[RMDB]
RNA sequence: GGGAACGACUCGAGUAGAGUCGAAAAGGCACAUUGCUGCGACUGUUAGAUUGCAAGCUGGUUCUAACACCGAGUUUGCCUCUAAUUCCUCGGUGUUGUCACUUGUUAACUUCACCGUUGAUCCUCAAGAGACCGCUGUUCGCAGCGGUCAAAAGAAACAACAACAACAAC
Reactivity to 2A3 in 0.01 (KOAc 150mM, MgCl2 10mM, bicine 150mM(pH8.5), 24C), signal-to-noise 5, nucleotides 027 to 129: g010g020c030a020c030a150u050u300g010c060u010g000c030g020a000c020u000g020u030u000a040g010a130u060u200g000c000a010a010g000c060u000g050g010u100u020c100u120a050a020c020a010c090c020g020a010g000u020u080u060g060c000c010u010c000u010a070a100u050u030c010c010u000c010g010g020u000g020u000u030g010u030c010a020c080u110u070g060u040u060a030a010c000u030u030c010a020c010c020g040u010u000g030a020u020c010c020u070c060a020a000g110a020
Reactivity to DMS in 0.01 (KOAc 150mM, MgCl2 10mM, bicine 150mM(pH8.5), 24C), signal-to-noise 4, nucleotides 027 to 129: g060g010c100a080c150a090u010u010g040c100u010g020c020g030a000c080u010g040u000u030a040g010a000u020u050g010c040a000a000g020c000u060g030g030u000u000c160u080a000a120c140a020c050c000g020a060g000u010u020u030g010c050c040u030c040u000a060a140u020u020c070c020u040c000g000g000u020g000u090u000g010u000c090a110c120u000u000g050u030u020a090a040c030u030u010c070a040c000c040g000u010u020g030a050u010c000c000u010c050a070a090g040a240